Conditions: 150 mM KOAc, 10 mM MgCl2 and 150 mM bicine (pH 8.5), 24 C.
An RNA of 207 nucleotides, treated with 2A3 and read out base by base.
The 2A3 profile rests on 405 reads.
RNA sequence: GGGAACGACUCGAGUAGAGUCGAAAAAGAGAUGGAAUCAGACUGGUCGGACGGACGCCUGUCAAUUGGCAGCCUGACGACGAGAUCCCAAUAAAUUGACUACACACGUAGAAGCUUAAGUAUACGAUGCCUUCGGACGUGGGUUCGACUCCCACCGGAUUGGAAGCUUCUUCGGAAGCUUCCAAUCAAAAGAAACAACAACAACAAC
Reactivity to 2A3 in 0.01 (KOAc 150mM, MgCl2 10mM, bicine 150mM(pH8.5), 24C), signal-to-noise 1, nucleotides 027 to 156: a000g170a020g020a050u150g100g130a130a100u110c100a070g090a190c000u140g060g000u000c060g030g000a010c050g000g010a110c060g060c000c020u040g090u130c000a030a010u080u140g000g000c000a000g000c000c000u040g000a000c000g000a000c010g000a000g000a070u090c000c000c000a000a000u130a070a020a060u080u110g030a030c020u030a090c130a030c020a000c100g000u000a020g010a110a000g030c020u160u190a220a050g000u020a080u020a150c030g020a060u010g110c000c000u070u070c020g050g070a020c000g020u020g030g000g000u020u020c000g000a050c050u020c060c040c030a030c000c000g060

2A3 adducts were read by reverse transcription with SuperScript II with manganese.